[RMDB]
RNA sequence: GGGAACGACUCGAGUAGAGUCGAAAAAAAAAAGAUAUGGAUCCCACAAACUGCUGUCAAGCCGAAGAACUUUAUCGGAAACGAUAAAGGGAGGCUUGAACAGCAGGAGGGAUCCUAAGUCAAAAAAUCAAAGCUUAUAGUUCGCUAUAAGCUUUGAAAAAGAAACAACAACAACAAC
Reactivity to DMS in 0.01 (KOAc 150mM, MgCl2 10mM, bicine 150mM(pH8.5), 24C), signal-to-noise 1, nucleotides 027 to 126: a000a060a050a070a160a060g000a060u000a300u010g000g000a010u000c000c000c000a050c080a120a120a120c010u000g000c000u000g010u000c010a010a020g010c000c000g000a120a080g040a120a090c010u010u000u010a000u010c000g010g000a070a150a120c000g010a020u000a000a000a010g000g000g040a080g000g000c010u000u000g020a030a000c000a000g020c000a000g000g000a180g000g010g000a030u000c010c000u000a010a040g010u000c020a000a030a060a120a090a090

Chemical mapping of a 177-nucleotide RNA with DMS. For DMS the reverse transcriptase was MarathonRT.